An RNA of 177 nucleotides, treated with 2A3 and read out base by base.
RNA sequence: GGGAACGACUCGAGUAGAGUCGAAAAGCAAUAUUAUUGCUACACGUCUAAGGACACUUUAGAUGAUAUCUUACAACAGGCUAAUAAGUCUGUUGGUAUUAUAUCUAUGCCUUUGGGAUAUGUGUCUCCAGAUGAAUGUGUUCGCACAUUCAUCUGGAAAAGAAACAACAACAACAAC
Reactivity to 2A3 in 0.01 (KOAc 150mM, MgCl2 10mM, bicine 150mM(pH8.5), 24C), signal-to-noise 2, nucleotides 027 to 126: g030c010a010a020u120a060u300u080a040u140u030g020c000u030a000c030a020c030g020u020c020u020a010a020g030g010a010c010a020c070u070u040u150a040g020a050u040g000a000u010a000u000c010u020u020a010c010a000a000c000a010g040g000c010u030a150a080u160a300a000g020u000c010u010g000u000u000g010g000u000a010u010u010a010u000a000u000c020u010a030u080g050c000c010u060u070u100g060g000g010a040u090a010u150g030u000g020u000c020u000
For 2A3 the reverse transcriptase was SuperScript II with manganese.